[RMDB]
About this RNA:
Conditions: 150 mM KOAc, 10 mM MgCl2 and 150 mM bicine (pH 8.5), 24 C. The record gives the reactivity of an RNA of 177 nucleotides to 2A3. Reactivities are given for positions 27 through 126. 2A3 is a SHAPE reagent: it acylates the 2'-hydroxyl of flexible nucleotides of all four kinds. It was measured as part of the RMDB library OK1LIB.
RNA sequence: GGGAACGACUCGAGUAGAGUCGAAAAUGUCACCCAGGCUGGAGUGCAGUGGCAUAAUCUCAGCUUACUGAAACCUCUGCCUUCCAGGUUAAGUGAUUCUCCUGUCUUAGCCUCCCGAGUAGCUGGGCCCGUCCAGUUCUUUCGAGAACUGGACGGGAAAAGAAACAACAACAACAAC
Reactivity to 2A3 in 0.01 (KOAc 150mM, MgCl2 10mM, bicine 150mM(pH8.5), 24C), signal-to-noise 2, nucleotides 027 to 126: u200g000u030c000a020c050c020c010a060g100g070c020u060g000g030a060g020u120g010c000a020g010u000g010g000c030a030u030a300a270u080c020u010c020a040g000c080u190u280a130c030u040g020a030a030a000c020c000u000c000u000g010c000c050u020u050c010c020a000g010g040u050u020a020a000g010u000g090a030u090u000c070u010c050c050u060g020u060c030u050u010a000g000c000c010u000c020c050c020g000a000g110u110a000g030c000u010g000g000g000